RNA sequence: GGGAACGACUCGAGUAGAGUCGAAAAGACGCGAGAGACGCGAGACGCGCAAUGGCAGAAGCCGCAAUAGAUCAUACGACGCAAGAGGCAAGACGGAGAGCGCGCACCUUGCGUUAAUAACCAAGAACGGUAGUAUAGGCUUCGGCCUAUACUACCGAAAAGAAACAACAACAACAAC
Reactivity to 2A3 in 0.01 (KOAc 150mM, MgCl2 10mM, bicine 150mM(pH8.5), 24C), signal-to-noise 4, nucleotides 027 to 126: g050a010c020g000c050g020a060g020a000g010a080c020g000c020g070a040g030a070c050g040c000g010c010a000a180u110g040g010c020a010g040a190a020g030c020c030g030c070a040a090u080a110g050a030u080c070a060u110a220c170g010a010c040g050c020a070a000g010a100g050g020c030a080a030g070a050c020g110g020a060g000a040g130c030g000c000g000c010a040c000c000u000u000g010c000g000u020u000a000a020u080a090a040c050c030a030a040g070a110a010
Reactivity to DMS in 0.01 (KOAc 150mM, MgCl2 10mM, bicine 150mM(pH8.5), 24C), signal-to-noise 2, nucleotides 027 to 126: g000a080c040g030c000g030a230g000a090g000a040c000g000c020g000a060g000a090c070g020c000g000c090a060a060u000g000g060c000a070g000a210a130g050c010c030g000c140a100a070u080a010g000a090u000c050a180u020a120c280g000a010c000g030c120a030a000g000a060g020g010c010a100a300g020a140c090g040g010a010g010a030g010c000g030c260g000c100a110c010c000u000u010g000c000g000u000u000a090a010u070a130a050c070c030a060a140g000a090a110